[RMDB]
RNA sequence: GGGAACGACUCGAGUAGAGUCGAAAAUUUACGGUAUUCGUACCGUAAACGAGCAAGCAAGCAGCGCAACGAGACAAGACGAUAAUAUGAUCGAGCAUGCUGAUAGUAGGAUCUUCGGAUCCUACAAGACUUGGGUGUUAUUCGUAACACCCAAGUCAAAAGAAACAACAACAACAAC
Reactivity to 2A3 in 0.01 (KOAc 150mM, MgCl2 10mM, bicine 150mM(pH8.5), 24C), signal-to-noise 3, nucleotides 027 to 126: u020u000u000a010c020g010g000u040a020u020u080c170g030u060a030c000c010g010u000a000a000a030c040g040a030g020c040a100a000g000c020a020a060g000c020a000g030c010g010c080a090a080c040g040a010g040a080c040a070a030g060a050c070g050a050u070a180a090u170a160u230g090a050u050c020g000a000g010c030a040u110g000c010u040g060a070u060a100g000u010a010g010g000a000u020c010u040u000c170g050g010a000u000c000c000u000a000c000a000a000
Reactivity to DMS in 0.01 (KOAc 150mM, MgCl2 10mM, bicine 150mM(pH8.5), 24C), signal-to-noise 3, nucleotides 027 to 126: u010u000u000a000c000g010g000u010a020u000u010c230g030u000a000c010c000g000u000a000a000a000c130g000a130g020c100a080a100g040c090a110a050g010c020a040g000c060g020c100a060a070c070g000a080g000a060c110a050a070g020a100c070g020a070u000a080a090u010a090u010g010a150u000c070g000a120g020c020a050u000g000c030u000g000a110u000a040g010u000a000g000g020a000u000c000u000u020c190g030g000a000u000c010c000u010a000c000a080a060

This 177-nucleotide RNA was probed chemically with 2A3 and DMS. DMS adducts were read by reverse transcription with MarathonRT. Values cover nucleotides 27 to 126.